[RMDB]
RNA sequence: GGGAACGACUCGAGUAGAGUCGAAAACUGGAGUUCCCCGGAGCGUCACGGGGCGAUGAGUGCGAUAAUGAAGGCUCAGAUUGACUGGAUCCCUUUGUCAGAAGGCGCAGUUCGUCCUUCCCAGGGAACAUUCUGCUAAAUUCGUUUAGCAGAAUGUAAAAGAAACAACAACAACAAC
Reactivity to DMS in 0.01 (KOAc 150mM, MgCl2 10mM, bicine 150mM(pH8.5), 24C), signal-to-noise 9, nucleotides 027 to 126: c060u000g010g010a210g010u000u000c010c010c000c090g010g000a090g020c090g010u000c080a090c130g000g010g010g010c080g000a040u000g000a120g020u000g010c020g010a100u000a080a080u010g000a090a080g010g010c140u000c030a050g000a260u010u010g010a080c040u000g010g010a100u000c110c020c020u000u000u010g010u010c140a100g000a080a070g010g000c060g010c070a080g010u000u000c030g010u000c010c030u000u000c020c020c020a160g000g000g000a090
Reactivity to 2A3 in 0.01 (KOAc 150mM, MgCl2 10mM, bicine 150mM(pH8.5), 24C), signal-to-noise 8, nucleotides 027 to 126: c020u050g090g050a080g040u050u070c030c000c010c010g040g030a060g050c040g050u060c040a030c080g000g010g020g010c020g020a040u060g020a020g080u140g100c020g050a060u060a180a080u230g070a100a020g040g000c010u000c030a020g030a120u130u140g060a100c030u020g040g050a100u110c010c010c010u040u080u050g120u060c040a040g020a120a030g080g000c020g010c030a010g040u060u070c030g020u020c000c000u020u020c010c000c010a040g030g000g020a010